[RMDB]
RNA sequence: GGGAACGACUCGAGUAGAGUCGAAAAUUCGAAUUCGUUCGAAACAACACCUUUGUGCUAGGGAGCCUAUGAAAGUGUGCCGAUCCCAUUGGGAUCGGAACUACACACUGCAUAGGCGAAGAACUAGCACUCUGGUUCGAAGAGCGUUCGCGCUCAAGUCGUAUUCACGGUUCGCCGUGAAUACGACAAAAGAAACAACAACAACAAC
Reactivity to 2A3 in 0.01 (KOAc 150mM, MgCl2 10mM, bicine 150mM(pH8.5), 24C), signal-to-noise 1, nucleotides 027 to 156: u000u000c000g000a000a020u050u050c200g110u050u040c010g040a050a150a030c060a040a020c040a050c020c000u000u000u010g000u000g000c040u000a060g000g000g030a030g000c020c040u010a000u000g070a300a300a000g040u040g000u020g000c000c000g000a000u000c000c120c300a300u190u300g030g000g030a000u000c010g000g000a000a000c000u050a000c000a010c000a000c000u000g000c010a000u010a040g000g000c010g000a000a000g000a000a010c020u000a000g010c000a000c000u000c000u020g040g050u120u150c040g160a290a020g000a000g020c000g050u090u160c270g010c000g000c040u030c000a000a000